RNA sequence: GGGAACGACUCGAGUAGAGUCGAAAAGGGGUCCGAUCCGCUUUGUCGGUAGACCGAUAAGCGUCUGAAGCCUCCACGGACGCUUUUGACGGUCUAUAAUCGACAAAUGAUCGGACGGAGGCACCCAAAGCAGAUUCGUGUUCGCACGAAUCUGCAACACAUUUCGAUAGUUCGCUAUCGAAAUGUGAAAAGAAACAACAACAACAAC
Reactivity to 2A3 in 0.01 (KOAc 150mM, MgCl2 10mM, bicine 150mM(pH8.5), 24C), signal-to-noise 3, nucleotides 027 to 156: g100g010g010g010u000c000c000g010a010u000c000c020g010c080u000u020u010g000u010c010g000g020u010a010g000a000c000c000g010a050u020a070a010g000c000g010u010c000u020g080a120a040g040c010c020u040c030c000a030c020g010g000a000c000g000c000u040u020u010u050g130a040c010g000g000u010c040u000a020u060a040a170u150c020g010a000c000a000a020a020u200g000a000u010c010g000g000a000c010g000g010a010g000g040c020a070c010c020c000a070a040a020g010c000a010g000a000u000u000c000g000u030g050u090u170c280g020c120a000c000g000a000a000u000c000u000g000c000a000a010
Reactivity to DMS in 0.01 (KOAc 150mM, MgCl2 10mM, bicine 150mM(pH8.5), 24C), signal-to-noise 2, nucleotides 027 to 156: g050g030g000g010u000c020c030g000a060u010c060c050g010c200u000u000u000g020u000c030g040g000u010a030g010a030c010c000g020a100u000a070a020g050c010g060u010c000u000g000a080a110g020c020c010u010c010c050a300c050g000g000a010c060g010c000u010u000u010u000g010a180c090g000g020u000c010u010a050u010a140a140u020c020g030a030c010a010a070a070u000g000a050u010c010g010g010a020c000g000g010a020g000g080c010a120c000c010c010a120a090a180g000c020a020g000a010u000u000c010g040u010g000u010u000c300g070c000a020c010g010a050a020u000c000u000g000c000a030a160
This 207-nucleotide RNA was probed chemically with 2A3 and DMS. DMS adducts were read by reverse transcription with MarathonRT. For 2A3, 6,877 sequencing reads were counted. Reactivities are given for positions 27 through 156.